The data come from the RNA Mapping Database (RMDB), library OK2TST. Chemical mapping of a 177-nucleotide RNA with DMS and 2A3. The 2A3 profile rests on 1,190 reads. Values are in units of 0.01, from 0 to 300, in steps of 10.
RNA sequence: GGGAACGACUCGAGUAGAGUCGAAAAACUUUGGUGCCACUCCGUUCUAUGAACACUACGAGGCGGUCUUCGCGGUAUCGGACGGGCCCUCUUCGAGGUAUGUCGUGUUCGGGAUACGGGAGAAGAACCACACAUUCCAAUUCGUUGGAAUGUGUGGAAAAGAAACAACAACAACAAC
Reactivity to DMS in 0.01 (KOAc 150mM, MgCl2 10mM, bicine 150mM(pH8.5), 24C), signal-to-noise 2, nucleotides 027 to 126: a080c050u010u010u000g010g020u000g020c040c050a170c070u010c060c030g010u000u000c000u000a110u010g040a030a040c050a050c050u000a120c080g010a090g000g010c300g000g000u000c080u000u000c070g050c030g000g000u010a010u010c070g010g000a040c120g000g020g010c070c000c010u010c030u030u000c060g010a150g030g010u010a060u020g010u000c070g000u000g030u020u000c000g020g010g010a070u000a020c010g030g000g030a110g000a080a090g040a160a230
Reactivity to 2A3 in 0.01 (KOAc 150mM, MgCl2 10mM, bicine 150mM(pH8.5), 24C), signal-to-noise 1, nucleotides 027 to 126: a010c050u200u100u180g120g000u140g060c020c000a060c020u010c010c010g000u040u000c060u100a300u220g000a040a000c040a000c040u090a020c030g050a030g060g040c080g000g030u060c030u110u090c050g080c030g080g080u090a100u210c030g050g000a020c000g000g070g000c040c000c000u000c000u030u050c110g080a130g000g110u210a100u260g130u030c030g040u020g020u010u020c000g000g010g050a140u130a090c040g050g040g000a020g000a090a040g060a030a020